[RMDB]
RNA sequence: GGGAACGACUCGAGUAGAGUCGAAAAGAUAUGGAGUGGUUAUGGAGCGUAAGAUUCGGAAACGAAUCGAACGCUAUGAAGUAACGUAACAUCUCCUAAGUCAAACCUCGGGCUUCGGCCCGAGGAAGACAUGGAACUUCUUCGGAAGUUCCAUGUCAAAAGAAACAACAACAACAAC
Reactivity to DMS in 0.01 (KOAc 150mM, MgCl2 10mM, bicine 150mM(pH8.5), 24C), signal-to-noise 1, nucleotides 027 to 126: g030a030u010a010u020g000g000a000g040u020g040g000u000u000a000u000g010g010a030g000c000g010u000a090a300g000a000u000u000c000g040g000a000a000a030c030g010a000a000u000c000g000a070a010c020g040c000u030a090u030g010a180a200g010u040a000a000c020g020u030a220a110c160a110u050c000u040c000c000u020a000a080g010u000c020a090a190a140c010c000u000c000g000g000g000c030u000u030c250g070g000c000c000c010g000a020g000g020a020a060
Reactivity to 2A3 in 0.01 (KOAc 150mM, MgCl2 10mM, bicine 150mM(pH8.5), 24C), signal-to-noise 1, nucleotides 027 to 126: g000a000u020a000u010g010g000a000g010u160g040g000u150u020a010u040g000g000a000g010c000g000u000a050a020g020a000u010u000c000g030g010a050a010a000c000g020a010a020u000c000g000a000a000c000g000c000u010a150u030g000a000a020g030u000a010a000c010g030u070a140a080c090a270u090c000u030c010c010u020a030a000g020u000c020a080a040a300c000c010u000c030g010g000g000c050u160u170c300g260g000c000c000c000g020a000g000g010a000a000